This 177-nucleotide RNA was probed chemically with DMS and 2A3. The data come from the RNA Mapping Database (RMDB), library RFMREP. Values cover nucleotides 27 to 126. Values are in units of 0.01, from 0 to 300, in steps of 10. The DMS profile rests on 3,313 reads.
[RMDB]
RNA sequence: GGGAACGACUCGAGUAGAGUCGAAAACUGGUCUGGCGAAAGGCUCCCGUGUGUCGCCUCGCAGUGUGGGUGCGGCCUCGUACCGGGCAGCGUGACCCUGACCUACAGCAAACGCCCCAGAGCCCAAGACGAAGUAAUAGUUCGCUAUUACUUCGUCAAAAGAAACAACAACAACAAC
Reactivity to DMS in 0.01 (KOAc 150mM, MgCl2 10mM, bicine 150mM(pH8.5), 24C), signal-to-noise 4, nucleotides 027 to 126: c100u010g000g000u000c030u000g000g020c040g010a090a100a100g000g010c020u000c000c010c000g000u020g000u020g030u000c050g020c000c000u000c010g010c030a130g010u010g030u030g010g010g000u000g030c050g020g000c020c140u000c140g000u010a080c170c030g010g010g030c100a030g010c020g000u000g000a300c300c010c020u000g000a050c010c020u010a100c100a070g020c110a030a060a140c160g000c010c000c000c040a080g000a100g010c000c020c020a110a130
Reactivity to 2A3 in 0.01 (KOAc 150mM, MgCl2 10mM, bicine 150mM(pH8.5), 24C), signal-to-noise 4, nucleotides 027 to 126: c050u020g010g010u020c040u050g020g010c020g030a090a040a040g180g000c010u010c020c010c000g020u070g030u040g000u040c010g010c030c020u000c020g070c080a280g110u090g040u160g300g040g020u210g030c000g000g020c000c020u070c050g040u040a080c050c060g000g030g000c100a010g010c110g130u040g030a040c020c000c000u020g030a040c000c010u030a040c020a030g050c030a080a100a080c080g040c020c000c000c000a030g030a020g050c000c010c010a030a020